Chemical mapping of a 177-nucleotide RNA with DMS and 2A3. Reactivities are given for positions 27 through 126.

RNA sequence: GGGAACGACUCGAGUAGAGUCGAAAAGGGACACGGCUCGCUGGAGCUUCCCUCAAUAUGCAUGGGAACUGAUGUCCGUCAGUCGAGCCUUGAAAUGGUCUCCUGAAGGGGCCUAUUUGGCAUCAGCUGAAAUAGUCUGGUUCGCCAGACUAUUUCAAAAAGAAACAACAACAACAAC
Reactivity to DMS in 0.01 (KOAc 150mM, MgCl2 10mM, bicine 150mM(pH8.5), 24C), signal-to-noise 3, nucleotides 027 to 126: g000g000g010a060c080a120c120g000g010c000u000c010g030c020u010g020g010a080g010c120u000u000c000c000c000u000c080a140a120u020a090u020g000c160a090u000g020g000g010a040a070c170u010g010a050u000g000u000c000c060g000u000c030a010g020u010c060g020a020g010c010c010u000u000g010a030a090a120u010g010g000u010c010u000c000c020u000g020a130a210g010g030g010g000c010c020u000a030u000u000u000g010g020c000a090u000c020a100g030c270
Reactivity to 2A3 in 0.01 (KOAc 150mM, MgCl2 10mM, bicine 150mM(pH8.5), 24C), signal-to-noise 3, nucleotides 027 to 126: g040g010g010a010c010a010c060g000g020c000u000c020g000c010u020g040g000a040g040c100u020u000c000c000c000u010c010a220a250u280a100u240g100c090a050u130g010g010g000a050a020c040u040g030a060u060g080u070c030c030g010u010c020a010g040u140c020g020a040g020c030c020u010u050g050a050a060a010u100g020g010u000c030u090c070c040u140g070a180a160g020g030g000g000c010c030u110a170u050u120u130g020g000c020a030u020c030a050g030c060

Conditions: 150 mM KOAc, 10 mM MgCl2 and 150 mM bicine (pH 8.5), 24 C.